Chemical mapping of a 207-nucleotide RNA with 2A3 and DMS.
The 2A3 profile rests on 3,604 reads.
The RNA was probed in 150 mM KOAc, 10 mM MgCl2 and 150 mM bicine (pH 8.5) at 24 C.
Source: RMDB library OK3TST, as collected in RNAgym.

RNA sequence: GGGAACGACUCGAGUAGAGUCGAAAAUCACUUUGGGACGCUUAGAAUUUGAGCGGCUAAAUUUUGAGGUUUGGAAGAACCUGACGAACUGGUCGUGGCUCAAUUCAAUUUCUUUGAUGUCGCUUUUAAGAGUGAGUUCGAGUGAGAGUGGUAAUGGCUAGAUUGAGUGGUUCGCUACUUAGUCUAGAAAAGAAACAACAACAACAAC
Reactivity to 2A3 in 0.01 (KOAc 150mM, MgCl2 10mM, bicine 150mM(pH8.5), 24C), signal-to-noise 3, nucleotides 027 to 156: u030c000a000c000u040u020u030g060g000g020a000c010g000c010u020u030a020g020a070a050u090u030u080g000a000g000c000g020g000c010u040a080a050a030u080u060u020u150g030a000g000g030u020u010u010g040g050a040a020g010a010a020c010c000u010g020a070c020g010a040a040c050u030g010g020u020c000g030u020g070g020c010u010c040a000a020u060u010c010a010a020u020u020u000c020u020u020u030g030a050u050g020u020c010g040c050u040u050u010u060a030a000g030a000g000u000g010a040g010u030u080c030g010a010g020u030g010a050g000a010g030u050g010g040u050a070a030u100g030g000
Reactivity to DMS in 0.01 (KOAc 150mM, MgCl2 10mM, bicine 150mM(pH8.5), 24C), signal-to-noise 5, nucleotides 027 to 156: u000c020a020c040u000u000u000g020g040g020a030c030g000c020u000u020a080g020a100a110u000u000u000g010a040g020c020g030g020c010u000a040a050a110u000u000u000u000g010a230g020g010u000u000u000g040g040a160a270g000a020a020c010c000u010g010a100c090g010a060a080c100u000g020g030u000c040g020u010g030g000c040u000c050a030a120u000u000c050a060a060u000u000u000c020u010u000u010g020a100u000g020u000c020g020c020u010u000u000u000a060a140g000a080g000u000g000a070g010u000u000c060g010a140g000u000g000a080g000a100g030u000g020g000u000a050a100u000g020g010